The record gives the reactivity of an RNA of 177 nucleotides to 2A3 and DMS.
[RMDB]
RNA sequence: GGGAACGACUCGAGUAGAGUCGAAAAAAAAAGAUAUGGAUCAUUGCACCACCAUCGAUCACAACGUAACAUCUAUCGGAAACGAUAGUGGUUGUGGGAGGUGGGAUAAUGAUCCUAAGUCAAAAAAGUAAGAAUAAUUGUUCGCAAUUAUUCUUACAAAAGAAACAACAACAACAAC
Reactivity to 2A3 in 0.01 (KOAc 150mM, MgCl2 10mM, bicine 150mM(pH8.5), 24C), signal-to-noise 3, nucleotides 027 to 126: a040a030a000a030a030g030a020u080a030u110g000g000a000u010c010a010u010u060g070c190a120c080c010a000c010c000a160u300c050g040a050u040c000a000c000a020a010c000g060u090a050a020c020a250u160c010u010a010u000c000g010g040a090a030a040c010g010a010u000a000g010u020g000g000u020u010g010u010g000g010g010a020g020g010u010g000g020g000a030u060a010a000u000g000a000u000c000c000u000a010a000g020u000c000a060a000a030a090a130a040
Reactivity to DMS in 0.01 (KOAc 150mM, MgCl2 10mM, bicine 150mM(pH8.5), 24C), signal-to-noise 3, nucleotides 027 to 126: a010a080a060a120a070g010a010u010a300u020g000g000a000u010c010a010u000u010g020c300a200c000c010a020c000c000a300u010c140g000a100u010c010a010c000a000a000c000g000u000a040a040c240a010u010c000u000a000u010c000g020g010a080a080a090c000g010a020u000a000g010u000g010g010u000u000g000u000g000g000g010a040g020g030u000g000g000g000a030u000a010a000u000g000a010u000c000c010u000a010a030g020u010c010a000a060a110a110a100a110
The RNA was probed in 150 mM KOAc, 10 mM MgCl2 and 150 mM bicine (pH 8.5) at 24 C. The data come from the RNA Mapping Database (RMDB), library TTRDES. The 2A3 profile rests on 6,770 reads. DMS adducts were read by reverse transcription with MarathonRT. For 2A3 the reverse transcriptase was SuperScript II with manganese.